[RMDB]
RNA sequence: GGGAACGACUCGAGUAGAGUCGAAAAGGAGAGAUCUACGGUGUCUAUCUCGUUGAUGAACUCUUCGUAGUCCGACUCCGACAUGAAGGAUAUCGAAAGAUAUAGCUUGUCUCCGAUAGUGUCAUAGUCCACGAAAUGGUAGUUGUCUACCAGGCAGUAAUGAAGUUUUGUUCGCAAAACUUCAUUAAAAAGAAACAACAACAACAAC
Reactivity to 2A3 in 0.01 (KOAc 150mM, MgCl2 10mM, bicine 150mM(pH8.5), 24C), signal-to-noise 6, nucleotides 027 to 156: g020g010a010g000a000g010a030u010c000u050a010c030g000g090u090g100u100c150u160a200u080c090u040c060g060u040u030g030a040u030g060a080a100c010u010c000u060u030c020g040u070a040g050u010c040c030g020a030c020u010c030c040g020a030c000a020u050g040a060a030g100g020a020u020a020u060c050g030a100a080a010g040a020u050a020u050a120g110c050u080u120g030u090c020u000c040c000g060a070u070a180g060u050g010u000c010a020u060a050g030u000c030c030a060c110g070a040a040a070u040g030g010u010a070g010u050u190g050u100c000u010a010c010c000a000g050g000c030a020g080
Reactivity to DMS in 0.01 (KOAc 150mM, MgCl2 10mM, bicine 150mM(pH8.5), 24C), signal-to-noise 5, nucleotides 027 to 156: g010g010a030g010a140g000a050u010c020u010a080c020g030g010u000g020u000c040u000a090u010c020u000c160g030u000u030g010a070u000g020a040a050c020u000c020u000u000c030g030u000a040g030u000c020c030g010a170c020u000c010c020g010a080c080a040u000g010a140a300g010g000a080u000a020u000c020g020a140a110a200g010a030u000a040u000a120g000c100u000u000g010u000c010u010c020c030g000a100u010a160g010u000g000u000c040a130u000a120g010u000c030c030a100c090g010a070a090a220u010g000g010u000a060g010u000u010g010u000c010u000a050c030c020a050g000g010c070a230g010
Conditions: 150 mM KOAc, 10 mM MgCl2 and 150 mM bicine (pH 8.5), 24 C. Chemical mapping of a 207-nucleotide RNA with 2A3 and DMS. For 2A3 the reverse transcriptase was SuperScript II with manganese.